Annotation: Chemical mapping of a 170-nucleotide RNA with 2A3 and DMS. The 2A3 profile rests on 126,470 reads. The RNA was probed in 150 mM KOAc, 10 mM MgCl2 and 150 mM bicine (pH 8.5) at 24 C. The DMS profile rests on 78,044 reads.
[RMDB]
RNA sequence: GGGAACGACUCGAGUAGAGUCGAAAAACGUUGAUAUGGAUUUACUCCGAGGAGACGAACUACCACGAACAGGGGAAACUCUACCCGUGGCGUCUCUGUUUGACGAGUAAGUCCUAAGUCAACAUGCGCGCAAUGGUGUUCGCACCAUUGAAAAGAAACAACAACAACAAC
Reactivity to 2A3 in 0.01 (KOAc 150mM, MgCl2 10mM, bicine 150mM(pH8.5), 24C), signal-to-noise 9, nucleotides 027 to 129: a000c070g000u000u000g000a000u000a000u030g000g000a000u000u010u010a000c000u000c000c010g020a040g010g000a010g040a000c000g010a010a020c090u270a090c100c000a000c010g010a050a020c030a080g010g000g000g000a000a000a000c000u010c000u010a030c010c020c000g000u000g000g010c000g000u000c000u000c000u000g040u070u180u100g000a000c000g000a000g000u000a000a000g000u000c000c000u000a000a000g000u000c000a000a000c010a020u130g120c160g000c020g000
Reactivity to DMS in 0.01 (KOAc 150mM, MgCl2 10mM, bicine 150mM(pH8.5), 24C), signal-to-noise 9, nucleotides 027 to 129: a070c140g030u020u000g000a030u000a040u000g000g000a030u010u010u000a010c000u040c000c020g040a060g000g000a030g020a000c020g010a050a020c050u080a300c000c000a000c030g000a040a180c090a130g030g000g000g030a050a010a050c020u020c000u010a090c290c170c020g010u010g000g010c030g010u020c020u020c000u000g000u000u030u040g010a140c300g020a010g020u000a000a000g020u010c000c000u000a010a050g010u000c020a000a000c010a080u060g050c130g000c150g010